[RMDB]
RNA sequence: GGGAACGACUCGAGUAGAGUCGAAAACACGUGCCGCAGUGGCGGUUUGUCGCCGAGCCCGGAUCAGGUGAGUUAAAUCCGGGCCCGGCAACGCGUUUGGUGUUCGACCUGGACCCGGGCGAAGGCGGGGUUACAGUGAGUUCGCUCACUGUAACCCAAAAGAAACAACAACAACAAC
Reactivity to 2A3 in 0.01 (KOAc 150mM, MgCl2 10mM, bicine 150mM(pH8.5), 24C), signal-to-noise 2, nucleotides 027 to 126: c060a000c040g090u100g020c000c000g030c060a180g100u170g300g000c010g000g010u120u100u130g090u050c040g000c000c000g010a020g010c000c000c030g000g000a000u020c070a060g220g150u190g120a130g090u160u250a040a140a030u000c000c000g000g000g000c000c020c010g010g000c010a000a010c000g020c010g000u000u130u170g060g000u030g060u020u050c040g040a220c030c010u010g070g040a090c030c000c020g020g000g000c060g020a080a000g080g010c060g030
Reactivity to DMS in 0.01 (KOAc 150mM, MgCl2 10mM, bicine 150mM(pH8.5), 24C), signal-to-noise 2, nucleotides 027 to 126: c020a080c090g010u000g030c000c000g020c040a250g030u010g010g020c010g000g000u010u010u010g010u000c090g030c000c000g030a050g000c000c000c000g020g000a020u000c120a150g030g020u010g000a130g030u000u010a100a120a040u000c000c000g010g000g010c000c000c010g020g010c020a010a010c010g010c110g000u000u000u010g020g010u010g010u000u000c030g000a140c050c030u000g010g000a130c030c020c020g020g020g020c020g020a070a140g020g010c100g020